[RMDB]
RNA sequence: GGGAACGACUCGAGUAGAGUCGAAAACUGGCCUGUGUGGAAGUACGUGAGUACUUCACUCUCUACGGGAGUAGAGACACACAGAUGGUGGAGCCAUGUCUUGGAACUACUCCCGUAGUUCACGUAUGACUCACGUCAUACCAAGACGCCAGCCACGCGUCAGUAGUGAUUUCGAUCACUACUGACGAAAAGAAACAACAACAACAAC
Reactivity to 2A3 in 0.01 (KOAc 150mM, MgCl2 10mM, bicine 150mM(pH8.5), 24C), signal-to-noise 6, nucleotides 027 to 156: c000u000g010g000c010c000u010g010u010g000u010g030g010a060a030g010u080a010c010g020u030g030a010g000u120a180c000u120u090c010a050c010u130c000u000c000u000a000c000g010g000g010a010g000u010a000g000a000g030a010c000a000c000a000c000a000g000a000u000g000g040u080g110g140a060g120c000c000a010u000g000u000c000u010u000g020g000a030a040c010u010a000c000u000c000c030c010g000u000a000g000u070u150c160a130c120g130u130a050u170g020a000c000u000c040a020c020g000u000c010a010u030a060c000c000a000a010g000a010c010g000c000c000a000g000c010c000a070c040g040
Reactivity to DMS in 0.01 (KOAc 150mM, MgCl2 10mM, bicine 150mM(pH8.5), 24C), signal-to-noise 2, nucleotides 027 to 156: c000u000g020g020c020c000u000g050u050g040u000g000g000a070a070g010u000a010c000g010u000g020a260g000u000a060c110u020u010c080a070c060u010c050u000c000u000a010c000g010g020g000a160g010u000a000g010a100g010a290c020a020c010a020c010a040g010a030u010g010g000u000g030g000a240g030c000c030a040u000g030u000c030u000u030g000g000a110a200c000u000a020c010u000c070c050c070g000u010a010g000u010u000c070a050c160g060u010a040u000g000a060c010u000c070a080c130g000u000c010a050u000a110c030c010a040a040g000a040c030g000c000c010a050g030c000c010a080c130g030
Chemical mapping of a 207-nucleotide RNA with 2A3 and DMS. The RNA was probed in 150 mM KOAc, 10 mM MgCl2 and 150 mM bicine (pH 8.5) at 24 C. The DMS profile rests on 4,031 reads. Source: RMDB library OK3TST, as collected in RNAgym. The 2A3 profile rests on 7,361 reads.